[RMDB]
RNA sequence: GGGAACGACUCGAGUAGAGUCGAAAAUCAAAGCCUGGUCAAAAGGCCUUGGAGGCUGGAAGCUCUCGUUUAGCCCCACCAGCUUCCCAGAGCAGCAAGGCCAAGCAUGCAAGAGUCACCAUCCACCGCAUUCGUAUACAUUCGUGUAUACGAAUGCAAAAGAAACAACAACAACAAC
Reactivity to 2A3 in 0.01 (KOAc 150mM, MgCl2 10mM, bicine 150mM(pH8.5), 24C), signal-to-noise 1, nucleotides 027 to 126: u100c010a010a040a090g010c020c010u000g000g040u010c000a030a070a050a190g060g010c000c000u000u020g010g000a020g010g000c010u000g000g020a020a030g010c010u000c010u020c100g090u110u170u220a020g010c030c010c030c000a060c000c020a010g000c000u000u010c000c000c000a040g040a020g000c000a010g000c030a070a040g010g000c040c010a000a000g000c010a030u130g000c030a100a040g030a010g040u030c000a000c050c010a050u040c030c020a020c050c060
Reactivity to DMS in 0.01 (KOAc 150mM, MgCl2 10mM, bicine 150mM(pH8.5), 24C), signal-to-noise 2, nucleotides 027 to 126: u010c090a120a100a110g010c010c020u010g030g030u010c050a020a120a190a120g000g020c000c000u000u000g020g000a030g000g000c020u000g000g000a160a160g000c020u000c050u020c170g020u000u020u000a050g030c010c040c090c190a150c000c030a000g000c010u000u000c000c010c070a040g000a130g000c000a030g020c110a090a150g000g010c010c010a030a020g020c030a050u000g040c090a050a120g000a070g010u000c030a110c050c070a060u000c030c010a070c240c160